Chemical mapping of a 307-nucleotide RNA with 2A3. The reactions ran in a buffer of 150 mM KOAc, 10 mM MgCl2 and 150 mM bicine (pH 8.5), at 24 C.
RNA sequence: GGGAACGACUCGAGUAGAGUCGAAAACGACAACUACGGUUGUCGAAGAUGUACUCUACGGAGUACAUCACUACAACUACGGUUGUAGAAGCCGGCUACGUGAGUAGCCGGCAACGUGUAACGUACGCGUUACACGAACGGUCGCGCUUCGGCGCGACCGAAGUGGUGCGUGAGCACCACACUGCACCGCUUCGGCGGUGCAGAAGGGAAACGGGAACUGGGCUUGGGACAAGAGCCAUCCCAAGUCCAAGGCCAAGUAGGCUCGUACCAACGGAUUCGUCCGUUGGAAAAGAAACAACAACAACAAC
Reactivity to 2A3 in 0.01 (KOAc 150mM, MgCl2 10mM, bicine 150mM(pH8.5), 24C), signal-to-noise 1, nucleotides 027 to 266: c010g000a000c000a020a000c000u080a020c270g130g000u000u000g000u000c000g000a010a040g010a000u010g000u000a000c000u020c020u010a080c300g060g030a000g000u000a010c000a000u000c000a000c000u000a000c010a000a000c000u070a010c120g140g000u000u020g000u040a020g050a120a050g000c000c000g000g040c010u000a000c000g060u020g110a070g030u020a000g000c020c020g010g000c020a000a010c030g010u020g000u030a010a000c010g010u000a090c270g040c010g170u000u000a000c000a000c000g000a060a010c030g000g010u030c010g000c010g000c060u110u160c300g130g000c010g000c000g000a000c010c000g000a080a020g000u000g000g000u000g030c010g020u070g050a020g010c000a000c020c000a010c000a000c000u010g000c010a010c050c000g050c020u070u060c180g150g000c000g000g060u000g000c000a000g010a000a010g070g050g020a060a090a060c080g050g040g050a030a110c100u020g010g020g000c000u000u050g000g010g000a060c010a090a210g020a050g030c070c010a050u020c000c000c020a010a020g000u000c000c000a020a030g090g000c020c000a000a030g120u110a080g060g030c000u010c010g000u080a130
Reactivities are given for positions 27 through 266.